The record gives the reactivity of an RNA of 177 nucleotides to 2A3 and DMS. Values cover nucleotides 27 to 126. DMS adducts were read by reverse transcription with MarathonRT. 2A3 is a SHAPE reagent: it acylates the 2'-hydroxyl of flexible nucleotides of all four kinds.
RNA sequence: GGGAACGACUCGAGUAGAGUCGAAAAUAAAAUCGUAGGGCGAGACGAUCGACGUAAAUCGCUCAAACUACUCGAGACCAAAGGAAUACGCUUCGGUAACUCGCUCUAAUCCCGAGCCAUAAAUGAAUCAAUAAUCACGUUUCGACGUGAUUAUUGAAAAAGAAACAACAACAACAAC
Reactivity to 2A3 in 0.01 (KOAc 150mM, MgCl2 10mM, bicine 150mM(pH8.5), 24C), signal-to-noise 3, nucleotides 027 to 126: u040a010a030a010a060u140c060g020u010a050g000g020g000c030g010a000g020a050c070g000a030u030c030g040a030c030g020u040a000a040a150u080c060g000c030u000c020a030a050a040c050u050a040c030u000c090g020a020g010a020c050c120a070a030a000g100g030a120a070u060a050c010g030c090u060u050c020g000g000u000a050a010c000u000c000g010c010u000c020u000a020a080u030c000c000c010g010a020g000c050c040a170u180a110a110a080u220g100a050a070
Reactivity to DMS in 0.01 (KOAc 150mM, MgCl2 10mM, bicine 150mM(pH8.5), 24C), signal-to-noise 3, nucleotides 027 to 126: u020a050a070a090a110u010c100g020u010a070g000g020g000c000g000a030g020a040c100g050a040u000c010g020a060c030g000u000a000a070a070u000c080g010c030u010c040a050a140a160c100u000a040c080u000c070g000a040g030a150c120c090a070a070a100g000g010a080a070u000a030c030g000c130u000u030c040g030g000u000a070a070c010u000c020g000c010u000c000u000a040a100u010c010c000c020g000a120g000c130c130a060u010a020a070a100u010g010a120a130